An RNA of 177 nucleotides, treated with DMS and 2A3 and read out base by base. The 2A3 profile rests on 2,512 reads. 2A3 adducts were read by reverse transcription with SuperScript II with manganese. The reactions ran in a buffer of 150 mM KOAc, 10 mM MgCl2 and 150 mM bicine (pH 8.5), at 24 C.

[RMDB]
RNA sequence: GGGAACGACUCGAGUAGAGUCGAAAACGAGGUCCUAGCAACUCGCUGGAAGUAAACAAGAAACAGAGCGCUGUCUCCAGUUGUUCUCCAGCUUGGUCGAGAACGAAGACAUGCGACUGGGUCACGAUAGGCUAAAUACCUUCGGGUAUUUAGCCUAAAAAGAAACAACAACAACAAC
Reactivity to DMS in 0.01 (KOAc 150mM, MgCl2 10mM, bicine 150mM(pH8.5), 24C), signal-to-noise 3, nucleotides 027 to 126: c070g000a060g020g000u020c000c060u030a110g010c110a100a150c150u030c110g000c040u010g000g000a080a090g020u020a140a080a080c170a150a130g010a040a010a050c050a020g010a090g000c040g010c000u000g000u000c000u000c020c150a130g000u050u020g030u010u000c020u000c010c050a090g040c080u030u030g000g050u020c160g030a010g010a010a000c100g010a100a030g010a030c000a050u010g020c000g000a130c020u020g000g000g000u010c010a050c180g020a120
Reactivity to 2A3 in 0.01 (KOAc 150mM, MgCl2 10mM, bicine 150mM(pH8.5), 24C), signal-to-noise 4, nucleotides 027 to 126: c060g060a040g020g060u020c010c010u060a010g020c050a050a110c020u070c080g000c020u020g010g010a050a040g060u150a050a030a050c120a070a050g040a070a060a000c060a020g070a060g070c070g020c090u050g070u120c000u040c010c020a110g020u060u030g000u040u100c010u020c010c040a080g020c060u060u170g070g020u140c070g010a010g030a140a050c040g030a060a000g020a020c010a050u140g000c000g000a030c030u030g000g010g040u040c010a000c100g050a080